[RMDB]
RNA sequence: GGGAACGACUCGAGUAGAGUCGAAAAGCAGGUGGGGCUGAGCUUGGAGAUGAACAGUUGGUCUCUAAAGUGCAGGGUCUACGAGCAUGACCUGGGGACUCCUCUGUGAAGCAGAUGGUGCUGAACAGAACUAUUCCAGUUUCGACUGGAAUAGUUCAAAAGAAACAACAACAACAAC
Reactivity to 2A3 in 0.01 (KOAc 150mM, MgCl2 10mM, bicine 150mM(pH8.5), 24C), signal-to-noise 5, nucleotides 027 to 126: g040c030a020g010g100u060g000g040g000g000c020u030g020a010g010c020u040u030g040g020a050g010a050u080g080a110a040c030a110g080u120u110g090g000u020c010u000c000u070a150a120a020g050u070g060c050a020g010g000g080u000c020u050a030c070g040a040g060c040a060u090g030a050c000c010u020g010g020g010g020a030c010u000c030c010u000c010u000g030u020g060a050a020g040c020a000g020a130u130g060g090u030g030c020u030g000a030a020c040a060
Reactivity to DMS in 0.01 (KOAc 150mM, MgCl2 10mM, bicine 150mM(pH8.5), 24C), signal-to-noise 7, nucleotides 027 to 126: g020c050a060g010g020u000g010g010g010g010c040u000g000a130g010c040u000u000g000g010a070g020a040u000g010a130a120c150a120g010u010u000g010g010u010c020u010c020u000a040a060a070g020u000g020c090a120g010g010g010u000c030u000a070c100g000a180g010c080a090u000g000a060c030c010u000g010g000g000g020a140c070u000c040c020u000c040u000g000u000g000a120a080g010c040a050g010a110u010g010g020u010g010c040u000g000a130a070c150a100